The record gives the reactivity of an RNA of 177 nucleotides to DMS and 2A3. High 2A3 reactivity points to a flexible backbone, as in loops and unpaired stretches. DMS adducts were read by reverse transcription with MarathonRT. For 2A3, 905 sequencing reads were counted. For 2A3 the reverse transcriptase was SuperScript II with manganese. For DMS, 1,396 sequencing reads were counted.

RNA sequence: GGGAACGACUCGAGUAGAGUCGAAAACUGUGGUGAAACGGCCCCUGCUGUUUGGUUGGCCGUCGAGUGCCAGCAAUCCAAGUCACUGCAGAUACGUUUUGAAAGGAUCCUGCGGUCACCGGGGGCAGCGUACCGAAAAUUUCGAUUUUCGGUACGCAAAAGAAACAACAACAACAAC
Reactivity to DMS in 0.01 (KOAc 150mM, MgCl2 10mM, bicine 150mM(pH8.5), 24C), signal-to-noise 2, nucleotides 027 to 126: c070u000g030u020g010g010u000g000a030a110a130c160g000g040c000c010c010c040u000g000c080u000g040u020u000u000g010g000u000u000g000g020c000c020g000u040c180g000a220g030u020g020c030c010a010g000c030a050a080u000c020c030a080a130g000u000c110a030c000u000g000c000a040g000a060u000a110c130g020u000u020u000u020g010a080a140a170g010g000a040u000c070c050u000g030c010g010g000u000c110a050c080c050g000g000g000g000g010c120a040
Reactivity to 2A3 in 0.01 (KOAc 150mM, MgCl2 10mM, bicine 150mM(pH8.5), 24C), signal-to-noise 1, nucleotides 027 to 126: c000u010g020u070g150g080u100g070a100a040a090c090g020g000c020c000c020c020u080g080c050u060g080u090u060u060g140g030u070u050g030g000c020c010g000u040c040g060a080g040u170g010c000c000a000g000c020a030a020u000c010c020a070a020g010u020c010a000c040u000g010c010a000g000a040u140a080c050g000u010u080u110u220g260a200a020a000g040g010a000u060c000c020u060g020c050g050g000u080c030a040c030c030g010g010g000g010g020c020a000